[RMDB]
RNA sequence: GGGAACGACUCGAGUAGAGUCGAAAAUUCUGCUGGUGAGAGCAAGAGAGGGCGUGUGGAUCCCUGUGUCCAUGGACCGACCGUGGGAGGCCUCACCAUCCGUCCAUAUUUUGACUGAAGUAUUAAAAGUACAAGGGAACUUCGGUUCCCUUGUACUAAAAGAAACAACAACAACAAC
Reactivity to DMS in 0.01 (KOAc 150mM, MgCl2 10mM, bicine 150mM(pH8.5), 24C), signal-to-noise 1, nucleotides 027 to 126: u020u000c020u020g010c050u010g020g010u000g000a040g000a090g000c020a070a040g040a270g010a120g010g010g010c130g000u010g030u000g000g030a100u000c010c050c080u000g010u000g000u000c010c040a050u020g000g030a200c120c210g020a100c020c020g010u010g010g010g010a100g000g020c040c000u010c030a030c040c010a000u010c040c080g000u000c000c050a040u000a060u000u010u010u010g010a190c130u020g010a060a100g010u000a080u000u000a060a110a100

Chemical mapping of a 177-nucleotide RNA with DMS.
Reactivities are given for positions 27 through 126.
The RNA was probed in 150 mM KOAc, 10 mM MgCl2 and 150 mM bicine (pH 8.5) at 24 C.
The DMS profile rests on 833 reads.